An RNA of 177 nucleotides, treated with DMS and read out base by base. DMS adducts were read by reverse transcription with MarathonRT. Source: RMDB library TTRDES, as collected in RNAgym. Values are in units of 0.01, from 0 to 300, in steps of 10.
RNA sequence: GGGAACGACUCGAGUAGAGUCGAAAAAAAAAAAGAUAUGGACCUGUAUGCUUAUUGUCAGUUCCUAACUCGGAAACGAGUUAGAACUUGGAUUUAUAAGCCACUACAGGUCCUAAGUCAAAAAAAACGCUAAUAUGUAGUUCGCUACAUAUUAGCGAAAAGAAACAACAACAACAAC
Reactivity to DMS in 0.01 (KOAc 150mM, MgCl2 10mM, bicine 150mM(pH8.5), 24C), signal-to-noise 1, nucleotides 027 to 126: a010a000a050a120a040a100a090g010a010u030a300u010g000g000a000c010c020u000g060u010a010u010g000c010u000u000a010u000u010g010u000c000a080g020u000u010c270c040u020a000a010c000u010c020g000g000a070a100a090c020g000a010g000u000u000a000g000a000a010c000u000u020g030g000a010u010u000u000a030u000a030a000g000c020c130a020c080u000a010c000a010g010g000u010c000c000u000a000a060g000u020c020a020a000a000a150a070a120a130a120